[RMDB]
RNA sequence: GGGAACGACUCGAGUAGAGUCGAAAAAUAGAACGCAUUAGAUGAAUUGCUGGGGCAAGGAGAGGCAAAGGUUCAGAUGCGGUAACACUGGAACUCCCUGUCAAGUAAGGUUUCAGUCUUUUGAAUGUAAUAGCAGAAACUUCGGUUUCUGCUAUUAAAAAGAAACAACAACAACAAC
Reactivity to 2A3 in 0.01 (KOAc 150mM, MgCl2 10mM, bicine 150mM(pH8.5), 24C), signal-to-noise 1, nucleotides 027 to 126: a060u100a060g050a110a060c000g000c060a060u080u110a090g050a190u070g040a020a220u110u070g010c030u020g000g000g080g050c110a170a090g000g040a120g040a030g030g020c030a030a050a050g110g000u000u020c040a030g020a040u040g010c000g040g030u030a070a000c070a010c080u020g000g040a020a020c010u100c030c000c010u120g210u230c020a060a060g050u050a060a030g000g060u040u000u020c000a030g000u000c020u000u060u060u100g030a090a000u090g010
Reactivity to DMS in 0.01 (KOAc 150mM, MgCl2 10mM, bicine 150mM(pH8.5), 24C), signal-to-noise 3, nucleotides 027 to 126: a090u000a130g010a120a160c080g010c050a050u000u000a100g020a130u000g000a090a090u010u000g000c050u000g020g020g000g020c130a070a090g010g010a100g010a120g000g000c080a010a100a050g020g000u000u000c070a100g000a060u000g010c010g020g000u000a040a090c190a070c030u010g000g000a020a070c020u000c040c060c020u000g010u010c160a060a100g010u000a080a050g000g010u000u000u000c010a030g010u010c050u010u000u000u010g000a120a100u000g000

Background: Chemical mapping of a 177-nucleotide RNA with 2A3 and DMS. For 2A3, 647 sequencing reads were counted. The RNA was probed in 150 mM KOAc, 10 mM MgCl2 and 150 mM bicine (pH 8.5) at 24 C.